Chemical mapping of a 177-nucleotide RNA with DMS and 2A3. DMS adducts were read by reverse transcription with MarathonRT. 2A3 adducts were read by reverse transcription with SuperScript II with manganese. Reactivities are given for positions 27 through 126. High 2A3 reactivity points to a flexible backbone, as in loops and unpaired stretches. For 2A3, 1,951 sequencing reads were counted.

[RMDB]
RNA sequence: GGGAACGACUCGAGUAGAGUCGAAAAGCCGACGCGACCGUCGACGUGAUCGCCCGCGUGCACGCCAUCGACGACAUCACCGCGCGGUUCCCGCUGCUCGACGGCGAGGGUUCGGCACUGCGCAGGACUCGUGAUCACCAUUCGUGGUGAUCACGAGAAAAGAAACAACAACAACAAC
Reactivity to DMS in 0.01 (KOAc 150mM, MgCl2 10mM, bicine 150mM(pH8.5), 24C), signal-to-noise 1, nucleotides 027 to 126: g000c070c000g000a000c050g000c040g000a120c040c000g020u000c020g070a030c110g000u010g010a100u000c100g000c200c010c040g010c100g020u000g000c140a100c060g020c020c020a030u010c100g020a120c080g050a050c050a060u000c070a050c110c080g000c030g000c010g000g010u000u030c030c040c000g000c110u000g000c100u000c040g000a050c040g010g000c090g000a070g010g030g010u000u010c040g000g000c020a150c050u000g000c040g000c020a130g000g000a160
Reactivity to 2A3 in 0.01 (KOAc 150mM, MgCl2 10mM, bicine 150mM(pH8.5), 24C), signal-to-noise 2, nucleotides 027 to 126: g000c010c020g020a020c010g090c030g080a300c000c000g000u000c000g000a030c010g000u040g070a170u080c030g020c000c000c010g010c030g040u060g040c130a030c140g090c000c030a140u140c080g180a140c020g100a050c070a070u110c030a040c070c000g030c000g000c010g000g020u030u000c000c000c000g000c030u080g020c050u050c010g030a040c020g020g000c030g000a070g040g140g000u070u020c010g030g000c000a010c090u110g000c090g000c050a040g060g000a020